[RMDB]
RNA sequence: GGGAACGACUCGAGUAGAGUCGAAAAGGCCUCAUAUUUAGAAUGUCAUAGCUUCUCAGAAUCUGCUUUGAAAUUGAAAGUCAACAUAGCUCCUUCUGCUGUGGUGCAAAUGUCUAGAGCCUAAACAUCUCUAAAAUGGAAACUGGGCUGGGUGUGGCAAAUAGUAGCAUUUCGAUGCUACUAUUUGAAAAGAAACAACAACAACAAC
Reactivity to 2A3 in 0.01 (KOAc 150mM, MgCl2 10mM, bicine 150mM(pH8.5), 24C), signal-to-noise 4, nucleotides 027 to 156: g010g000c020c010u050c030a040u100a270u120u060u030a040g030a040a030u050g020u050c040a060u040a110g010c010u210u170c030u030c050a030g010a060a060u030c040u040g020c050u080u070u100g050a070a120a120u100u130g060a130a100a020g060u120c030a020a010c010a080u050a030g000c010u060c040c060u180u190c100u100g010c010u020g010u040g020g000u000g010c000a020a040a060u090g030u000c020u010a020g010a000g020c000c000u020a040a050a020c020a020u030c050u000c010u180a030a050a050a070u040g000g020a090a030a060c060u040g010g040g030c010u030g000g050g040u060g010u040g010g000
Reactivity to DMS in 0.01 (KOAc 150mM, MgCl2 10mM, bicine 150mM(pH8.5), 24C), signal-to-noise 3, nucleotides 027 to 156: g010g020c000c030u000c040a070u010a070u000u000u010a040g010a130a100u000g000u000c000a170u000a090g000c020u000u000c030u010c040a110g030a300a050u010c020u000g030c000u000u010u000g010a030a080a210u010u000g010a140a090a120g010u000c010a040a040c030a070u000a100g010c020u010c080c080u000u000c050u000g040c010u010g040u010g020g030u010g000c000a030a060a070u010g010u000c030u010a070g000a090g000c030c010u000a170a050a090c040a070u000c050u000c010u000a030a030a060a080u000g000g000a050a080a080c050u000g000g000g040c030u000g000g000g020u000g020u000g010g020